[RMDB]
The record gives the reactivity of an RNA of 177 nucleotides to DMS and 2A3. For DMS the reverse transcriptase was MarathonRT. Values are in units of 0.01, from 0 to 300, in steps of 10. The RNA was probed in 150 mM KOAc, 10 mM MgCl2 and 150 mM bicine (pH 8.5) at 24 C.
RNA sequence: GGGAACGACUCGAGUAGAGUCGAAAAUUGGAUUAUUCAUCUGGAAAGACGCGCACAAGCGGAAAAAACCGUAGGUCUUUCCGGCUACAACGAGCACGCAAGGCAUUUUGGGCGACUUCGGUCGCCCUGAUAAACAACGGUUCGCCGUUGUUUAUCAAAAAGAAACAACAACAACAAC
Reactivity to DMS in 0.01 (KOAc 150mM, MgCl2 10mM, bicine 150mM(pH8.5), 24C), signal-to-noise 5, nucleotides 027 to 126: u020u020g010g000a090u020u020a060u020u020c090a090u010c020u000g000g000a020a040a020g010a020c020g020c190g030c210a110c210a100a180g000c000g010g010a000a110a100a130a140a120c010c010g000u000a060g000g010u000c000u000u000u000c000c000g000g000c140u010a070c170a040a070c100g000a060g010c060a060c040g000c090a070a090g010g000c070a120u010u000u000u000g020g010g010c000g000a020c000u000u010c180g020g000u000c000g020c000c000c000
Reactivity to 2A3 in 0.01 (KOAc 150mM, MgCl2 10mM, bicine 150mM(pH8.5), 24C), signal-to-noise 8, nucleotides 027 to 126: u100u070g060g030a030u070u060a100u230u210c060a100u030c030u040g000g010a010a010a010g020a010c040g040c020g050c300a030c040a210a140g020c040g000g000a130a160a030a020a030a050c010c010g000u040a040g000g100u000c010u000u000u000c000c000g010g010c010u070a040c020a130a030c050g030a020g040c040a020c090g040c030a050a050g120g000c110a130u050u090u200u200g010g000g000c000g000a000c000u030u040c200g070g000u000c000g000c000c000c000